[RMDB]
RNA sequence: GGGAACGACUCGAGUAGAGUCGAAAAUGCUGCGGAUGCGUACAUGAUAAACAUGUAUGACUAGCUGUGUCCAGCUAGUGGCUGUUCUCCAGUCUAUAGAACGGCCUCUAGGCAGAAGCGUCCCCACACAUCCGUGGCUCUUCGGGGCCAUGGAUGUAAAAGAAACAACAACAACAAC
Reactivity to DMS in 0.01 (KOAc 150mM, MgCl2 10mM, bicine 150mM(pH8.5), 24C), signal-to-noise 9, nucleotides 027 to 126: u040g010c010u000g010c070g000g010a070u010g000c010g010u000a000c000a000u000g000a210u060a120a130a220c000a000u000g000u000a000u000g010a070c020u000a040g000c010u000g010u030g020u030c200c020a060g010c010u000a000g010u000g000g010c000u000g010u000u000c000u010c200c180a130g010u050c210u040a100u030a030g000a020a000c000g000g000c010c000u000c010u000a220g010g010c030a040g000a080a080g000c110g020u000c010c000c000c200a110c200
Reactivity to 2A3 in 0.01 (KOAc 150mM, MgCl2 10mM, bicine 150mM(pH8.5), 24C), signal-to-noise 9, nucleotides 027 to 126: u110g000c000u010g020c050g080g040a100u080g030c010g010u000a000c000a000u020g040a180u180a120a170a050c010a000u000g010u000a000u010g030a060c010u020a010g010c010u010g070u040g120u250c120c010a000g000c000u000a000g010u000g030g000c000u010g010u010u010c020u030c050c040a090g150u060c070u170a190u090a130g010a000a000c000g010g000c000c000u000c000u010a040g050g010c010a010g020a060a010g030c040g060u040c010c000c000c000a030c010
The record gives the reactivity of an RNA of 177 nucleotides to DMS and 2A3. The DMS profile rests on 33,196 reads. For 2A3 the reverse transcriptase was SuperScript II with manganese. It was measured as part of the RMDB library OK1LIB. The reactions ran in a buffer of 150 mM KOAc, 10 mM MgCl2 and 150 mM bicine (pH 8.5), at 24 C. For 2A3, 56,422 sequencing reads were counted.